RNA sequence: GGGAACGACUCGAGUAGAGUCGAAAAGAUAUGGAACUAUCGACGAGGACGUUGAAACACUGUUCUACUGCGUUCGGAAACGAACGCAGUAGAACAGUGUGGAGUCCCGUCGAGUAGUUCCUAAGUCCAUUAUAGAAACCUUCGGGUUUCUAUAAUGAAAAGAAACAACAACAACAAC
Reactivity to DMS in 0.01 (KOAc 150mM, MgCl2 10mM, bicine 150mM(pH8.5), 24C), signal-to-noise 1, nucleotides 027 to 126: g010a120u010a300u010g000g010a020a010c010u010a010u010c000g010a020c000g010a130g060g010a010c010g020u020u030g020a190a140a020c000a000c000u010g040u000u000c000u000a010c000u010g010c000g040u000u000c000g000g030a140a070a180c010g010a030a010c010g050c020a010g040u000a010g000a000a000c010a000g020u000g000u010g000g000a030g020u000c000c010c010g020u000c000g000a020g020u010a010g000u000u000c000c000u000a010a100g000u000c050
An RNA of 177 nucleotides, treated with DMS and read out base by base. It was measured as part of the RMDB library TTRINS. The reactions ran in a buffer of 150 mM KOAc, 10 mM MgCl2 and 150 mM bicine (pH 8.5), at 24 C.